Chemical mapping of a 177-nucleotide RNA with 2A3 and DMS. Conditions: 150 mM KOAc, 10 mM MgCl2 and 150 mM bicine (pH 8.5), 24 C. For DMS, 1,938 sequencing reads were counted. Source: RMDB library VIROID, as collected in RNAgym.

RNA sequence: GGGAACGACUCGAGUAGAGUCGAAAAGAGGUGGAGAUGCCAUGCCGACCCGAAGAGGAAAGAAGGACGCGGACGCGAACCUGUGAGUGGAAACCCGCUUUAUUCACUGGGGUCGACAACUCUGGGGCAUAGAAGGAAGCUUCGGCUUCCUUCUAUGAAAAGAAACAACAACAACAAC
Reactivity to 2A3 in 0.01 (KOAc 150mM, MgCl2 10mM, bicine 150mM(pH8.5), 24C), signal-to-noise 1, nucleotides 027 to 126: g090a000g000g030u120g020g060a100g050a140u130g070c040c020a020u060g060c010c000g020a030c020c010c020g020a060a020g050a020g040g050a080a040a050g040a010a030g020g000a000c020g000c040g020g030a070c080g010c030g100a130a210c020c020u030g050u070g050a050g030u040g040g030a090a110a110c000c000c030g000c000u070u130u060a140u090u070c010a000c110u050g060g000g000g010u000c030g010a010c010a090a030c000u000c010u010g000g010g020g000
Reactivity to DMS in 0.01 (KOAc 150mM, MgCl2 10mM, bicine 150mM(pH8.5), 24C), signal-to-noise 3, nucleotides 027 to 126: g000a060g010g030u000g020g010a120g000a100u010g000c060c030a080u000g020c040c010g020a050c030c020c010g000a100a050g010a090g020g010a050a080a160g020a100a060g010g010a200c050g010c070g040g000a080c150g010c050g000a080a070c030c010u010g000u010g000a030g000u010g010g000a070a070a070c080c030c020g000c100u000u010u010a070u010u010c050a060c050u010g020g000g010g000u000c020g010a060c090a020a090c040u000c040u000g000g000g010g000